[RMDB]
RNA sequence: GGGAACGACUCGAGUAGAGUCGAAAAUCUCCUCCCUCCCCUUCGAGGAUUCCCCUGCGACGGGUAGGCUCAUCCUGAGACCGGGGAGCUUCGAAGAUCUCUCUAUUCUCCAGAAAGGAGGAAGGAGCUACCAAAGACUUCGGUCUUUGGAAAAGAAACAACAACAACAAC
Reactivity to DMS in 0.01 (KOAc 150mM, MgCl2 10mM, bicine 150mM(pH8.5), 24C), signal-to-noise 6, nucleotides 027 to 129: u030c070u000c000c000u020c040c000c000u030c030c010c090c000u000u000c000g030a030g010g020a120u040u020c010c000c000c000u030g040c000g040a300c010g000g040g040u000a120g050g050c090u040c110a000u030c000c000u030g020a130g030a290c030c060g000g000g000g000a030g000c010u000u000c020g010a000a000g000a100u000c080u020c000u020c010u000a140u020u000c000u000c010c030a190g090a200a160a140g050g000a000g010g000a030a300g000g040a010g000c300u090a100
Reactivity to 2A3 in 0.01 (KOAc 150mM, MgCl2 10mM, bicine 150mM(pH8.5), 24C), signal-to-noise 9, nucleotides 027 to 129: u030c010u020c000c000u020c000c000c000u020c000c010c000c000u000u000c000g010a010g020g040a220u070u040c010c000c000c000u040g020c010g100a100c020g020g000g020u050a100g160g030c050u050c060a110u070c010c000u050g020a050g050a130c020c040g000g000g000g000a000g000c000u000u000c000g010a020a020g030a050u020c030u010c000u000c010u040a200u150u010c020u010c010c000a080g190a280a180a060g070g000a000g000g000a000a040g010g000a000g000c020u090a070